[RMDB]
Conditions: 150 mM KOAc, 10 mM MgCl2 and 150 mM bicine (pH 8.5), 24 C. This 177-nucleotide RNA was probed chemically with DMS and 2A3. It was measured as part of the RMDB libraries RFM100 and RFMREP. For DMS, 4,593 sequencing reads were counted. 2A3 adducts were read by reverse transcription with SuperScript II with manganese.
RNA sequence: GGGAACGACUCGAGUAGAGUCGAAAACGACAAGGGAUUUUAUCUCGUUCUCUUAAUGCGAAUGAUUUUGAAAAGAUGUUGCUUCUGUGACAUUUUUUUUUAAUCAUUUGUGUUUGCAAACGGGAACGAAGGACAACAAGUUCGCUUGUUGUCCUUCAAAAGAAACAACAACAACAAC
Reactivity to DMS in 0.01 (KOAc 150mM, MgCl2 10mM, bicine 150mM(pH8.5), 24C), signal-to-noise 2, nucleotides 027 to 126: c020g000a090c250a060a050g000g010g000a070u020u030u050u020a080u010c020u000c000g010u000u000c020u000c020u000u000a010a000u000g000c000g000a010a000u000g010a000u000u000u010u010g000a010a020a020a010g000a000u000g010u010u000g020c010u030u080c240u020g050u000g010a010c000a000u000u010u000u000u000u000u000u000u000a000a000u000c000a000u000u010u010g020u000g010u010u010u020g000c120a050a110a060c080g000g000g000a010a070c110
Reactivity to 2A3 in 0.01 (KOAc 150mM, MgCl2 10mM, bicine 150mM(pH8.5), 24C), signal-to-noise 8, nucleotides 027 to 126: c050g110a030c060a040a040g060g010g020a070u050u080u120u250a140u060c000u010c010g000u020u000c010u000c000u020u060a020a020u020g010c010g010a010a000u000g010a000u000u000u030u050g010a010a010a000a000g010a000u000g000u000u000g010c010u140u160c120u290g000u040g000a000c000a000u000u000u000u000u000u000u000u010u030a000a000u000c000a000u000u000u000g000u000g010u000u010u020g020c030a020a010a010c020g000g010g000a020a020c060